[RMDB]
RNA sequence: GGGAACGACUCGAGUAGAGUCGAAAAAUCGCGCCUGGUCGGAACAUAACGACGGCGGGCCGGUGGGGAAUCAGGGGUCUACCGUGGGAUAGCGAUGAGACAGCCCCUCCGAUGGCACCAAGCGUCGCACACUGGCCAUACUUCGGUAUGGCCAGAAACAAAUAGACAAAUUCGUUUGUCUAUUUGUAAAAGAAACAACAACAACAAC
Reactivity to 2A3 in 0.01 (KOAc 150mM, MgCl2 10mM, bicine 150mM(pH8.5), 24C), signal-to-noise 3, nucleotides 027 to 156: a000u050c030g000c020g040c020c020u080g120g000u050c020g000g060a210a080c030a180u190a140a030c040g020a000c010g040g040c020g000g000g000c050c010g000g010u090g000g030g000g040a040a110u130c070a150g050g040g000g030u020c040u090a060c040c010g030u050g010g080g030a120u170a070g020c010g010a030u040g000a030g010a040c040a020g010c010c030c000c020u010c000c020g060a130u140g050g000c040a060c120c030a120a040g080c020g040u020c010g000c000a020c010a010c050u000g000g000c000c000a000u000a000c010u050u060c190g050g000u000a000u000g000g020c000c010a000g000a000a010
Reactivity to DMS in 0.01 (KOAc 150mM, MgCl2 10mM, bicine 150mM(pH8.5), 24C), signal-to-noise 1, nucleotides 027 to 156: a040u010c030g010c070g000c020c030u000g050g020u000c020g020g030a110a250c020a120u000a030a110c040g000a070c040g030g030c020g010g020g050c030c070g000g010u010g010g010g040g000a100a120u000c110a050g020g030g040g020u000c030u020a030c080c030g060u030g000g020g000a150u010a140g030c030g030a060u000g010a220g000a050c030a140g000c000c010c020c020u040c010c070g010a150u010g020g000c010a080c030c020a050a170g010c030g010u000c030g000c060a080c100a160c020u010g000g000c010c000a070u010a020c000u000u010c300g020g000u000a010u000g000g000c000c010a000g000a040a050
This 207-nucleotide RNA was probed chemically with 2A3 and DMS. 2A3 adducts were read by reverse transcription with SuperScript II with manganese. Source: RMDB library M2RFPK, as collected in RNAgym. The 2A3 profile rests on 1,970 reads. Values cover nucleotides 27 to 156. The RNA was probed in 150 mM KOAc, 10 mM MgCl2 and 150 mM bicine (pH 8.5) at 24 C.